RNA sequence: GGGAACGACUCGAGUAGAGUCGAAAAGAAGCGAUGAAUCUAAUAGAAGGAACAUGGUCAAGAGCCUUAGACACACUAAUCAACUAUUUCUCUAUGAGUUUAUCAGAAGUAAACCAACAUAAACUAGCUGUCAACUGUGAUUCGUCACAGUUGACAGAAAAGAAACAACAACAACAAC
Reactivity to 2A3 in 0.01 (KOAc 150mM, MgCl2 10mM, bicine 150mM(pH8.5), 24C), signal-to-noise 1, nucleotides 027 to 126: g040a000a000g060c060g030a010u040g020a090a050u000c020u060a030a000u090a130g090a200a030g040g010a030a000c030a060u120g000g050u090c090a050a020g030a040g080c030c000u050u040a010g100a020c020a030c010a000c110u040a000a130u080c030a050a060c030u050a080u000u090u010c000u020c010u010a070u040g020a110g030u000u070u070a030u020c030a010g050a270a010g060u100a100a140a000c020c010a010a050c030a030u170a010a050a100c090u000a050g090
Reactivity to DMS in 0.01 (KOAc 150mM, MgCl2 10mM, bicine 150mM(pH8.5), 24C), signal-to-noise 1, nucleotides 027 to 126: g100a080a030g020c090g010a010u000g010a160a080u040c010u000a100a050u000a100g020a070a030g030g000a030a090c100a050u000g000g020u000c050a070a060g000a110g000c020c060u000u000a100g000a080c070a050c060a030c030u000a040a020u000c060a070a100c080u000a070u010u010u010c020u000c030u000a020u010g020a140g000u000u000u000a010u010c030a100g020a100a090g000u000a020a020a090c000c040a040a060c150a050u000a020a100a090c100u000a050g000